Structure probing data (2A3 and DMS) for a 177-nucleotide construct. High 2A3 reactivity points to a flexible backbone, as in loops and unpaired stretches. 2A3 adducts were read by reverse transcription with SuperScript II with manganese. It was measured as part of the RMDB library RFM100. Reactivities are given for positions 27 through 126.
RNA sequence: GGGAACGACUCGAGUAGAGUCGAAAAAAACUGUUCCGGAUCCGGGAGGCGGAAGAAACAAAAAACAACCUGAUGCAGGUAGCCAGUGAGCAUAUUGCGCCGCUUCAGGAUGCUGCAGAUCUGGAAAGCUUCCGGUAUUAUUCGUAAUACCGGAAGCAAAAGAAACAACAACAACAAC
Reactivity to 2A3 in 0.01 (KOAc 150mM, MgCl2 10mM, bicine 150mM(pH8.5), 24C), signal-to-noise 4, nucleotides 027 to 126: a000a000a000c070u040g030u040u000c000c000g000g010a020u000c010c010g100g130g060a100g040g040c020g030g060a050a000g120a040a120a080c180a040a140a020a030a010a020c050a030a050c000c000u010g020a020u020g030c120a140g010g030u080a100g020c040c020a080g040u040g130a090g030c080a040u060a100u260u130g020c010g000c000c000g000c000u000u010c000a010g020g020a020u100g020c010u070g000c040a010g000a070u000c010u020g010g000a060a000a000
Reactivity to DMS in 0.01 (KOAc 150mM, MgCl2 10mM, bicine 150mM(pH8.5), 24C), signal-to-noise 1, nucleotides 027 to 126: a030a020a050c070u000g000u000u000c000c020g030g040a060u000c000c030g120g040g020a160g000g000c060g020g000a110a050g000a160a140a090c150a010a000a040a040a040a100c170a070a040c000c020u010g000a120u000g010c030a150g040g000u000a010g030c040c030a040g000u000g000a150g010c120a040u040a040u000u000g020c010g000c020c010g000c000u000u000c020a020g000g000a060u010g000c050u010g040c030a070g000a010u000c000u010g000g000a000a060a020